Conditions: 150 mM KOAc, 10 mM MgCl2 and 150 mM bicine (pH 8.5), 24 C. This 177-nucleotide RNA was probed chemically with DMS. The DMS profile rests on 2,292 reads. Source: RMDB library TTRDEL, as collected in RNAgym. DMS adducts were read by reverse transcription with MarathonRT.
RNA sequence: GGGAACGACUCGAGUAGAGUCGAAAAGAUAUGGAUAGGCUCUCUGCCGAUGCGAAGAACUCGGAAACGAGGGAGCAUCGGAACUACAGAAAGCCUAUCCUAAGUCAAAGGGAAGUUCGCUUCCCAACAAAGUAAAAGGCUUCGGCCUUUUACUUUGAAAAGAAACAACAACAACAAC
Reactivity to DMS in 0.01 (KOAc 150mM, MgCl2 10mM, bicine 150mM(pH8.5), 24C), signal-to-noise 3, nucleotides 027 to 126: g010a030u010a300u000g010g010a010u010a010g000g010c000u000c010u000c010u000g010c010c000g000a010u000g020c000g020a120a120g010a050a170c020u000c000g000g000a090a110a160c010g000a030g010g000g010a120g010c000a020u000c000g000g000a030a010c100u010a300c000a030g010a010a000a020g010c000c000u000a000u000c000c000u000a010a070g010u000c010a080a140a180g000g010g020a010a010g020u000u010c200g000c010u000u000c000c000c000a070a080